[RMDB]
RNA sequence: GGGAACGACUCGAGUAGAGUCGAAAACGCUGGUUGGUAUUGGUUCGUGGUUAUUUCAUAUGACUUUACAGUAUCGUUAUCAAUUGCUAGACGAACUACCAAUGCUGUAUGCGACCAUCAUCCAAAACGAUGCGUAGUCGUUCGCGACUACGCAUCGAAAAGAAACAACAACAACAAC
Reactivity to 2A3 in 0.01 (KOAc 150mM, MgCl2 10mM, bicine 150mM(pH8.5), 24C), signal-to-noise 2, nucleotides 027 to 126: c000g000c000u020g000g090u050u090g000g080u000a010u040u030g030g000u070u100c090g150u070g040g010u010u010a070u080u120u100c090a110u150a020u240g010a000c000u060u020u110a150c100a040g090u110a130u200c040g000u000u000a000u080c020a000a090u010u160g030c020u010a090g000a160c010g000a000a000c010u050a020c020c000a040a030u050g000c020u060g090u140a030u160g000c050g020a010c000c070a100u090c000a010u040c060c070a080a060a060a030
About this RNA: An RNA of 177 nucleotides, treated with 2A3 and read out base by base. It was measured as part of the RMDB library OK1LIB. The RNA was probed in 150 mM KOAc, 10 mM MgCl2 and 150 mM bicine (pH 8.5) at 24 C.